[RMDB]
Conditions: 150 mM KOAc, 10 mM MgCl2 and 150 mM bicine (pH 8.5), 24 C. Chemical mapping of a 177-nucleotide RNA with DMS and 2A3. It was measured as part of the RMDB libraries RFM100 and RFMREP.
RNA sequence: GGGAACGACUCGAGUAGAGUCGAAAACGCAUCAUUUGGUCGGGGUAGCGGCCCCUCCCGAUGCAUACGGGGUCGCUCCAGGCGCCGAUGGGAUACGGCGGGUGCUCCCCCGCGCGUCCCGGCGCAGGUUCGACAUUAUAUUCGUAUAAUGUCGAACAAAAGAAACAACAACAACAAC
Reactivity to DMS in 0.01 (KOAc 150mM, MgCl2 10mM, bicine 150mM(pH8.5), 24C), signal-to-noise 5, nucleotides 027 to 126: c080g000c000a010u010c010a180u020u020u030g010g020u010c150g010g000g000g010u020a020g010c010g010g000c000c000c000c000u010c010c010c020g010a020u010g010c030a060u020a060c210g010g010g020g020u000c010g000c000u000c040c040a200g010g010c000g020c000c000g010a180u050g010g010g000a060u000a020c000g000g010c010g010g000g000u030g010c200u030c140c080c000c000c010g000c000g000c010g000u000c000c000c000g000g010c000g010c010a040g000
Reactivity to 2A3 in 0.01 (KOAc 150mM, MgCl2 10mM, bicine 150mM(pH8.5), 24C), signal-to-noise 8, nucleotides 027 to 126: c040g000c000a020u020c020a040u060u120u300g180g030u170c130g050g020g000g050u090a010g000c010g000g010c000c000c000c000u030c000c000c010g020a020u030g010c020a010u080a190c110g000g000g000g000u000c000g000c000u010c000c000a050g050g000c000g000c010c020g160a200u220g070g000g000a010u030a060c000g010g000c020g000g000g000u100g050c040u100c010c010c000c000c000g000c010g010c000g010u010c000c000c000g000g000c000g000c000a000g090